[RMDB]
RNA sequence: GGGAACGACUCGAGUAGAGUCGAAAAUCCUAAGUCACCCUGUGCCAGAUUGGCGGUAGGCGAUGAGUAUAUCGGAAACGAUAUACGAGCCUACGGCCAAUCGGUAAUUCAGGGUGAUAUGGAAAAAGCUGUCAUGUCCUUCGGGACAUGACAGCAAUCAGUAACUGAUCUUCGGAUCAGUUACUGAAAAAGAAACAACAACAACAAC
Reactivity to DMS in 0.01 (KOAc 150mM, MgCl2 10mM, bicine 150mM(pH8.5), 24C), signal-to-noise 1, nucleotides 027 to 156: u020c000c000u010a050a190g040u000c010a030c000c000c000u000g000u000g000c030c010a180g040a020u000u000g000g040c000g070g070u010a000g020g000c000g000a240u030g000a300g000u010a010u010a010u020c000g030g000a300a150a300c010g030a050u000a010u000a000c040g000a170g000c000c000u000a020c030g020g060c000c000a010a010u000c010g000g040u010a000a040u000u010c000a000g020g000g030u000g000a000u000a040u020g000g010a050a070a110a170a140g010c000u000g030u020c000a030u020g000u000c000c000u000u010c300g030g000g020a020c010a000u010g000a000c020a000g000c000a000a010
Reactivity to 2A3 in 0.01 (KOAc 150mM, MgCl2 10mM, bicine 150mM(pH8.5), 24C), signal-to-noise 3, nucleotides 027 to 156: u030c010c000u020a100a040g010u010c000a000c010c000c000u010g030u030g000c040c040a150g010a010u000u000g020g010c090g070g010u010a010g010g000c040g130a300u190g030a050g030u000a010u000a000u000c010g000g000a130a110a050c020g000a000u010a000u000a010c000g010a000g020c020c010u010a000c010g010g000c000c000a000a000u000c000g000g000u010a010a080u160u120c010a000g000g000g000u000g000a000u000a010u020g010g030a060a100a020a120a010g010c000u000g020u000c000a000u000g000u020c000c000u030u130c300g070g000g010a000c010a000u010g000a010c000a000g010c000a000a000